[RMDB]
RNA sequence: GGGAACGACUCGAGUAGAGUCGAAAAGUCAAAGCUGAAGUUCACCAAAUCGUCAGCAUACGACAUGGAGUUCGCCCCGCUACCUGUUAACAUGAAAAGCGAAGCAUUUAACUACACCAGCGAGCACCGUCAUAUGUCGGUUCGCCGACAUAUGACGAAAAGAAACAACAACAACAAC
Reactivity to DMS in 0.01 (KOAc 150mM, MgCl2 10mM, bicine 150mM(pH8.5), 24C), signal-to-noise 2, nucleotides 027 to 126: g010u000c010a100a210a250g030c000u000g000a040a060g020u000u000c090a130c180c090a100a110a060u000c100g050u010c030a080g010c010a100u000a080c210g000a010c040a110u010g040g000a040g010u000u000c120g010c020c010c010c060g000c110u000a090c160c080u010g000u000u000a040a000c130a030u000g000a050a050a110a110g020c080g000a060a100g020c090a040u010u000u000a010a050c110u000a070c040a080c020c010a090g000c060g010a020g010c120a110c130
Reactivity to 2A3 in 0.01 (KOAc 150mM, MgCl2 10mM, bicine 150mM(pH8.5), 24C), signal-to-noise 1, nucleotides 027 to 126: g020u020c030a060a030a060g020c010u000g010a060a010g050u070u130c130a080c110c000a040a010a220u080c040g030u000c010a010g050c040a040u040a160c180g020a030c010a040u090g040g050a030g000u010u050c020g040c000c000c000c000g000c030u090a100c010c000u040g020u120u130a090a010c040a140u070g110a040a080a090a000g100c070g080a060a010g050c000a010u100u080u040a100a040c040u070a040c090a010c000c050a000g020c010g010a010g020c030a020c020